[RMDB]
RNA sequence: GGGAACGACUCGAGUAGAGUCGAAAAGAUAUGGACCAGCUUUUGACGAUCUAUGGUCGGAAACGACCAACAAUGAUCGAUAAGCUGUGUCCUAAGUCAAACCGUACGCACUUCGGUGCGUACGGAACCACGUUCUUUAGUUCGCUAAAGAACGUGGAAAAGAAACAACAACAACAAC
Reactivity to 2A3 in 0.01 (KOAc 150mM, MgCl2 10mM, bicine 150mM(pH8.5), 24C), signal-to-noise 4, nucleotides 027 to 126: g030a020u060a030u130g020g000a000c000c000a000g030c010u140u100u130u210g300a230c090g010a000u000c000u030a120u100g010g010u000c020g020g000a070a050a010c030g000a000c100c020a010a040c120a110a180u270g000a000u000c090g070a040u020a050a000g000c000u010g100u080g000u050c010c000u000a080a000g030u010c010a060a030a100c000c000g000u020a000c010g010c010a010c000u090u110c300g140g000u000g000c000g000u010a000c000g000g000a000a000
Reactivity to DMS in 0.01 (KOAc 150mM, MgCl2 10mM, bicine 150mM(pH8.5), 24C), signal-to-noise 2, nucleotides 027 to 126: g000a020u000a300u010g040g010a010c010c000a010g000c000u000u000u010u000g000a190c150g020a010u000c000u010a090u000g010g010u010c000g020g000a080a090a150c000g030a000c000c000a010a090c250a090a090u030g000a000u000c000g000a070u000a050a000g000c000u000g010u010g000u000c000c000u000a000a070g000u000c040a100a080a160c000c010g010u000a000c020g000c000a000c000u000u000c300g000g000u010g000c000g020u000a000c000g000g010a010a030